[RMDB]
RNA sequence: GGGAACGACUCGAGUAGAGUCGAAAACACUGGGAAGGACAGAGGUGACCCGAAUGUCCUUAUCCUGUAGGUAAAGGGAGCUAUGGAGGGUAUUUGAGCCUCUUCCUCACUUACCCAGCAUGGUCAGGACUCACAUUCCCUUCGGGGAAUGUGAGUCAAAAGAAACAACAACAACAAC
Reactivity to DMS in 0.01 (KOAc 150mM, MgCl2 10mM, bicine 150mM(pH8.5), 24C), signal-to-noise 1, nucleotides 027 to 126: c040a110c010u000g000g000g010a110a060g010g000a030c230a070g000a220g010g030u000g000a090c080c030c030g000a080a020u010g010u000c000c000u000u000a030u010c000c010u010g020u030a060g040g000u000a100a090a140g010g000g000a080g000c150u000a030u000g000g020a140g000g000g010u000a070u030u030u000g000a050g010c070c010u010c030u000u000c070c010u000c070a070c080u000u000a110c020c000c060a040g010c050a050u000g000g000u000c100a180g000
Reactivity to 2A3 in 0.01 (KOAc 150mM, MgCl2 10mM, bicine 150mM(pH8.5), 24C), signal-to-noise 1, nucleotides 027 to 126: c070a010c020u020g000g010g060a010a000g040g000a010c040a190g060a020g060g020u040g020a080c000c010c020g010a010a040u030g000u000c000c000u000u050a140u090c000c030u090g090u180a120g130g030u080a060a050a020g060g030g040a090g090c080u120a070u150g150g000a090g020g000g020u040a080u000u070u100g030a010g020c020c000u070c010u070u050c010c000u000c000a070c020u010u040a190c000c000c000a030g000c020a070u130g060g040u060c080a030g070

An RNA of 177 nucleotides, treated with DMS and 2A3 and read out base by base. For 2A3, 895 sequencing reads were counted. High DMS reactivity at an A or C suggests that its Watson-Crick edge is free. The DMS profile rests on 759 reads. Values cover nucleotides 27 to 126. It was measured as part of the RMDB library OK2TRN.